The record gives the reactivity of an RNA of 177 nucleotides to DMS and 2A3. For 2A3, 1,655 sequencing reads were counted.
RNA sequence: GGGAACGACUCGAGUAGAGUCGAAAAAAAAAAUCGCAAGGGUUGCACAGGAGCAGGGUCCACGUCCCGCAACCUGGGUGUCAUGAUUUCUUGAAGCCAUGAUAGUUGAUGCUCCUAAACAAAAAAAUCUAUACAUGUAGUUCGCUACAUGUAUAGAAAAAGAAACAACAACAACAAC
Reactivity to DMS in 0.01 (KOAc 150mM, MgCl2 10mM, bicine 150mM(pH8.5), 24C), signal-to-noise 1, nucleotides 027 to 126: a010a040a080a070a080a070u000c040g000c130a080a030g010g000g000u000u000g010c010a090c220a000g010g000a020g040c000a040g000g010g010u010c020c040a210c070g010u000c010c010c000g000c000a020a010c000c000u010g000g000g030u000g000u010c020a010u000g000a030u010u000u000c080u000u010g020a040a010g010c050c010a010u000g000a010u000a040g020u010u010g010a040u000g010c010u000c010c010u000a090a020a080c050a010a000a040a080a040a060a050
Reactivity to 2A3 in 0.01 (KOAc 150mM, MgCl2 10mM, bicine 150mM(pH8.5), 24C), signal-to-noise 1, nucleotides 027 to 126: a010a010a010a010a000a000u060c070g000c050a000a050g040g040g000u000u020g000c030a030c000a060g010g000a010g020c000a010g030g010g020u070c050c000a050c020g070u070c000c020c000g010c010a010a010c010c020u000g000g000g030u030g000u030c010a010u000g040a050u060u120u020c090u150u210g070a040a020g010c030c000a010u020g030a010u030a060g300u010u090g040a050u050g000c010u000c000c000u030a050a030a000c040a030a050a110a030a030a000a010
The RNA was probed in 150 mM KOAc, 10 mM MgCl2 and 150 mM bicine (pH 8.5) at 24 C.